The record gives the reactivity of an RNA of 177 nucleotides to DMS and 2A3. Reactivities are given for positions 27 through 126. For 2A3 the reverse transcriptase was SuperScript II with manganese. DMS adducts were read by reverse transcription with MarathonRT. Values are in units of 0.01, from 0 to 300, in steps of 10. Conditions: 150 mM KOAc, 10 mM MgCl2 and 150 mM bicine (pH 8.5), 24 C.
RNA sequence: GGGAACGACUCGAGUAGAGUCGAAAAUGAGGCCAUCUUUGCAAAGUACAAGGGCAAUGUUGAUACAACACUUCCUGAAGAAGCCCUUAUAGCAAUAGAUCAUUUGGUGUCCAAAUUUAAAGCAAUACUGAUAGAUGCGAUUCGUCGCAUCUAUCAGAAAAGAAACAACAACAACAAC
Reactivity to DMS in 0.01 (KOAc 150mM, MgCl2 10mM, bicine 150mM(pH8.5), 24C), signal-to-noise 2, nucleotides 027 to 126: u030g000a130g000g000c080c140a050u000c000u010u000u000g000c070a140a090a170g000u030a220c250a000a060g000g020g000c000a170a120u000g020u010u000g000a250u040a070c070a050a010c030a160c180u000u020c080c120u050g000a040a160g010a170a190g010c000c000c010u000u000a030u000a130g020c000a010a010u020a030g000a010u000c060a040u010u000u000g000g010u000g000u010c040c040a060a080a100u000u000u010a090a090a040g000c280a080a030u040a090
Reactivity to 2A3 in 0.01 (KOAc 150mM, MgCl2 10mM, bicine 150mM(pH8.5), 24C), signal-to-noise 4, nucleotides 027 to 126: u100g000a030g070g020c040c020a060u010c020u080u050u000g040c070a200a080a000g080u080a090c070a050a010g040g020g000c050a120a090u080g010u050u080g090a190u100a190c110a080a000c020a030c060u130u130c030c150u230g050a120a040g040a070a030g050c000c000c000u000u020a150u020a030g040c030a010a050u150a090g060a040u110c090a100u050u090u170g020g020u010g040u010c000c000a080a030a020u210u300u300a080a080a030g020c020a060a070u020a220